The record gives the reactivity of an RNA of 177 nucleotides to 2A3. The RNA was probed in 150 mM KOAc, 10 mM MgCl2 and 150 mM bicine (pH 8.5) at 24 C.

RNA sequence: GGGAACGACUCGAGUAGAGUCGAAAACGCUCGCUCCUUUGCCGACGCGGGGUUGGACUCGGUCCUGUCAGCAGAGCUGAGCCCCCACGUCAUGGGCACCGACUUCGGCCGGCUCAAAGCGCUGGGCAGGAAGGAUACCCUUCGGGGUAUCCUUCCUAAAAGAAACAACAACAACAAC
Reactivity to 2A3 in 0.01 (KOAc 150mM, MgCl2 10mM, bicine 150mM(pH8.5), 24C), signal-to-noise 1, nucleotides 027 to 126: c050g030c020u030c020g000c020u020c020c030u060u100u080g040c000c050g000a000c030g010c040g020g000g000g040u030u220g110g060a190c030u000c020g040g030u110c010c030u050g010u070c070a050g130c000a010g090a010g000c020u060g000a010g000c000c000c000c000c000a040c000g010u000c030a060u130g000g000g000c050a050c000c010g090a140c010u110u100c050g100g040c020c050g090g010c020u020c100a040a050a010g090c080g040c060u030g000g040g000c000